[RMDB]
RNA sequence: GGGAACGACUCGAGUAGAGUCGAAAACGAAGGCGAUGGCAGCGUGACCGUCUACUACGCCGACAGCCGCAUGACGCUGUACCACGGCGACGCCUACACGGUGGCCGUUGGACUGGCGAGCGGCAGCGUCGACAGCAUCGUCACGUCGCCGCCGUACAGUCCAAUACGUGUUCGCACGUAUUGGACUAAAAGAAACAACAACAACAAC
Reactivity to DMS in 0.01 (KOAc 150mM, MgCl2 10mM, bicine 150mM(pH8.5), 24C), signal-to-noise 1, nucleotides 027 to 156: c050g020a120a130g000g030c040g000a060u000g010g020c020a050g010c020g010u000g000a010c060c050g040u000c040u000a050c000u010a040c100g070c020c060g020a040c000a120g000c000c020g000c030a160u000g030a140c030g050c020u020g040u000a180c030c030a040c030g000g060c000g000a020c010g020c000c020u000a150c090a100c120g000g040u000g000g010c000c010g020u000u020g040g000a090c040u010g040g000c010g040a160g030c010g000g010c020a000g000c000g010u000c010g030a000c010a100g000c010a230u000c140g000u000c010a060c000g030u000c010g030c020c000g030c000c020g000u000a040c080
Reactivity to 2A3 in 0.01 (KOAc 150mM, MgCl2 10mM, bicine 150mM(pH8.5), 24C), signal-to-noise 7, nucleotides 027 to 156: c050g060a100a030g050g000c020g130a160u120g030g000c010a010g000c020g020u000g010a010c020c070g010u040c020u050a080c010u020a020c060g030c030c010g060a020c050a030g000c010c000g000c010a020u170g140a090c010g000c010u060g010u220a300c000c000a000c000g010g000c060g110a160c020g030c000c000u170a230c180a050c290g020g010u010g040g010c000c000g050u110u180g010g000a050c110u040g010g010c000g000a030g000c010g000g000c000a010g030c010g000u010c020g030a140c020a050g020c020a070u100c040g010u010c000a000c000g030u040c040g000c000c000g000c000c000g000u030a040c040
The record gives the reactivity of an RNA of 207 nucleotides to DMS and 2A3. DMS adducts were read by reverse transcription with MarathonRT. The DMS profile rests on 3,740 reads. The RNA was probed in 150 mM KOAc, 10 mM MgCl2 and 150 mM bicine (pH 8.5) at 24 C. For 2A3 the reverse transcriptase was SuperScript II with manganese.